[RMDB]
RNA sequence: GGGAACGACUCGAGUAGAGUCGAAAAAUUUGGUCUGGCAUUGAAUCACGUUCCAUCAUCAGGCUCGGCGGAUAGUUGCCGGGUUUAUCCGUAUCAAGACACCCGGUCAAGACAGUUGAAGCUACUAACAAACUAUUAGUUUCGACUAAUAGUUUGUAAAAGAAACAACAACAACAAC
Reactivity to 2A3 in 0.01 (KOAc 150mM, MgCl2 10mM, bicine 150mM(pH8.5), 24C), signal-to-noise 6, nucleotides 027 to 126: a000u130u100u110g060g010u030c040u020g020g000c040a030u030u090g060a070a050u070c030a030c090g040u040u020c010c010a040u050c030a010u020c020a030g020g010c010u010c020g040g000c020g020g020a050u040a070g120u030u050g020c000c000g000g000g000u030u050u010a020u000c010c020g050u080a080u230c060a050a000g050a030c030a020c030c000c000g000g010u030c030a020a010g090a050c060a040g000u020u020g090a050a030g040c040u030a040c040u040a110
Reactivity to DMS in 0.01 (KOAc 150mM, MgCl2 10mM, bicine 150mM(pH8.5), 24C), signal-to-noise 8, nucleotides 027 to 126: a100u010u020u020g000g010u000c020u000g010g000c060a060u010u000g020a080a070u010c070a110c090g000u000u000c020c020a090u010c120a070u010c070a090g000g000c030u010c050g000g000c010g010g010a080u010a070g010u010u010g000c010c000g000g010g000u000u010u010a040u010c030c040g000u020a120u010c170a090a080g010a070c160a040c010c010c000g000g010u000c150a060a070g000a090c110a070g000u000u000g010a060a170g000c050u000a100c090u020a090